RNA sequence: GGGAACGACUCGAGUAGAGUCGAAAAACGUGACUCGCAGAAUUCUCUUUUUCAUCAGUAGAGUAUCUUAGUUGCGGAAUCGUUUUGGGAGUCCUGGAUGGCGGUAGUCAGCUGUUCUGCGGUCUGCGCAGUAUUACCGCUUCGGCGGUAAUACUGCAAAAGAAACAACAACAACAAC
Reactivity to DMS in 0.01 (KOAc 150mM, MgCl2 10mM, bicine 150mM(pH8.5), 24C), signal-to-noise 1, nucleotides 027 to 126: a020c030g010u000g010a300c080u020c020g070c020a070g000a060a110u000u000c000u000c010u010u010u010u000u000c200a090u010c180a120g010u000a040g000a040g020u000a040u000c130u000u010a090g020u000u000g000c030g010g000a100a070u000c020g020u000u000u000u000g000g000g000a110g000u000c020c030u000g010g020a100u010g010g060c070g020g010u000a040g010u010c040a090g000c010u010g030u010u000c030u010g000c060g000g010u010c040u010g010c290
The record gives the reactivity of an RNA of 177 nucleotides to DMS.
The RNA was probed in 150 mM KOAc, 10 mM MgCl2 and 150 mM bicine (pH 8.5) at 24 C.
Source: RMDB library OK2TRN, as collected in RNAgym.
The DMS profile rests on 1,349 reads.